[RMDB]
RNA sequence: GGGAACGACUCGAGUAGAGUCGAAAAAACAGUCUCAAUUAGUGUAAUUAGAAUUUCCUUAGGAGAGACAGAAUGAGGAAGAAGAAUAUUUGAAUAACUGAUGGCCUAUGGUUUUUCACAAAUUAAAAAGAGACAGCAGGCCAGGCAUGCUGGCUCACACAUUGUAGCGGUUCGCCGCUACAAUGUGAAAAGAAACAACAACAACAAC
Reactivity to 2A3 in 0.01 (KOAc 150mM, MgCl2 10mM, bicine 150mM(pH8.5), 24C), signal-to-noise 1, nucleotides 027 to 156: a000a000c050a000g040u060c010u030c030a040a180u110u130a110g010u100g070u210a140a170u060u050a070g100a090a060u020u020u010c000c000u000u010a010g060g000a000g050a000g000a000c040a010g020a000a080u090g030a030g140g000a000a000g010a040a000g010a140a000u080a080u150u160u150g000a160a000u080a140a030c000u030g040a040u010g040g000c010c000u090a090u030g020g040u010u030u060u120u120c030a050c030a090a120a000u090u080a090a090a000a010a030g000a000g000a000c050a000g000c000a000g060g020c080c000a030g030g080c000a000u160g000c000u000g040g000c000u000c040a000
This 207-nucleotide RNA was probed chemically with 2A3. The reactions ran in a buffer of 150 mM KOAc, 10 mM MgCl2 and 150 mM bicine (pH 8.5), at 24 C.